[RMDB]
RNA sequence: GGGAACGACUCGAGUAGAGUCGAAAAACGGGCAGUGGCGAUGGCAACGCGGCAGCCGCAGGGUCGACUUCUUCGCAGCCGCAACAGACGGGUCACGGGCAAAGAGGGGAUCUCGUUCUGUUGGAAGGCCGUAUCAGCGUUUCGACGCUGAUACGGCAAAAGAAACAACAACAACAAC
Reactivity to 2A3 in 0.01 (KOAc 150mM, MgCl2 10mM, bicine 150mM(pH8.5), 24C), signal-to-noise 2, nucleotides 027 to 126: a000c060g000g010g000c020a090g030u120g110g000c020g100a130u070g030g050c010a080a000c020g010c040g080g000c060a040g010c020c000g020c020a070g000g000g010u040c040g070a030c010u050u070c010u030u010c060g000c020a030g030c030c010g020c000a000a000c000a000g010a000c000g000g010g010u010c040a010c080g000g000g060c040a090a060a000g010a050g030g010g000g000a010u000c050u060c080g020u110u050c020u030g000u010u010g010g050a090a000g090